[RMDB]
RNA sequence: GGGAACGACUCGAGUAGAGUCGAAAAGCUUAAUAACCUGCGCUGAGCCCUUCUCCGCCAGCUUGCCUGUGUCCUAGGGAAUUGGAAGGUCAUCCUUCACAGGAUCGUGUGGAAGUCCUGCUCGGGGUCCAAACAUGGUAAUUCGUUACCAUGUUAAAACACAUUUGAAAUUCGUUUCAAAUGUGUUAAAAGAAACAACAACAACAAC
Reactivity to DMS in 0.01 (KOAc 150mM, MgCl2 10mM, bicine 150mM(pH8.5), 24C), signal-to-noise 4, nucleotides 027 to 156: g040c040u000u000a070a110u010a080a090c030c020u000g010c060g010c030u000g010a120g010c020c050c050u000u010c020u000c020c050g020c020c030a080g010c030u000u000g020c030c010u000g010u010g000u000c050c040u000a120g020g030g020a070a120u000u000g010g010a090a090g020g030u000c060a120u000c010c010u000u000c070a060c050a060g000g000a050u000c060g000u010g030u010g010g010a110a130g000u000c020c020u000g010c040u000c060g020g020g030g020u000c040c050a080a030a020c000a010u000g000g020u000a000a060u000u010c300g030u000u000a010c000c000a010u000g000u000u010a020a060
Reactivity to 2A3 in 0.01 (KOAc 150mM, MgCl2 10mM, bicine 150mM(pH8.5), 24C), signal-to-noise 9, nucleotides 027 to 156: g000c030u090u120a100a000u100a180a200c010c030u060g030c070g010c070u040g020a040g020c030c000c000u050u050c040u010c010c010g000c010c010a030g030c050u070u110g050c010c010u040g010u010g010u070c030c050u050a060g020g020g060a070a090u120u090g080g050a080a050g070g020u120c030a090u100c010c000u040u060c020a010c010a040g020g010a050u070c040g030u040g010u040g100g020a040a040g030u040c000c030u020g020c010u010c030g020g000g010g000u020c030c040a040a040a000c000a010u000g000g000u000a010a030u050u060c110g050u060u000a000c000c000a000u000g000u000u020a010a000

Notes
Chemical mapping of a 207-nucleotide RNA with DMS and 2A3. Source: RMDB library M2RFPK, as collected in RNAgym. The RNA was probed in 150 mM KOAc, 10 mM MgCl2 and 150 mM bicine (pH 8.5) at 24 C.